This 207-nucleotide RNA was probed chemically with DMS and 2A3.
[RMDB]
RNA sequence: GGGAACGACUCGAGUAGAGUCGAAAAUGAUCUGUCCUUGGGUCAGGCGGGGGAAGGCAACUUCCCAGGGGGCAACCCCGAACCGCAGCAGCGACAUUCACAAGGAAUCGGCCACCGCUGGGGUCACACGGCGUUGGUUUAAAUUACGUGAAUCGCCGAUCAUUAGAGAGUUCGCUCUCUAAUGAUCAAAAGAAACAACAACAACAAC
Reactivity to DMS in 0.01 (KOAc 150mM, MgCl2 10mM, bicine 150mM(pH8.5), 24C), signal-to-noise 1, nucleotides 027 to 156: u000g020a040u000c000u000g020u010c000c020u000u000g010g030g050u010c020a060g000g010c020g030g030g040g080g030a050a010g020g010c050a060a210c050u000u000c010c010c020a120g000g050g040g020g050c240a110a120c010c010c000c000g000a040a060c000c010g000c030a300g010c050a100g020c000g030a030c000a100u020u000c060a030c040a070a060g000g010a070a110u000c080g000g000c020c020a020c020c020g010c030u000g000g030g070g000u000c060a100c070a080c020g000g010c020g000u010u000g040g000u000u000u000a050a000a110u000u020a010c070g020u000g000a050a060u000c070g020c050c060
Reactivity to 2A3 in 0.01 (KOAc 150mM, MgCl2 10mM, bicine 150mM(pH8.5), 24C), signal-to-noise 1, nucleotides 027 to 156: u080g010a000u000c000u000g010u000c000c000u010u010g040g010g000u000c020a040g190g000c000g000g000g000g000g000a000a000g010g020c030a070a060c020u000u000c000c000c000a000g020g000g000g000g010c020a020a090c010c000c000c000g010a020a000c010c000g000c010a010g030c040a010g060c020g090a060c050a200u150u180c080a050c000a030a010g000g000a010a020u030c020g000g000c000c000a010c020c000g000c000u010g020g020g040g060u060c040a010c000a000c090g000g000c000g010u010u000g020g000u000u010u020a020a030a050u260u150a040c070g000u010g020a030a080u070c060g050c100c070

For DMS the reverse transcriptase was MarathonRT. The reactions ran in a buffer of 150 mM KOAc, 10 mM MgCl2 and 150 mM bicine (pH 8.5), at 24 C.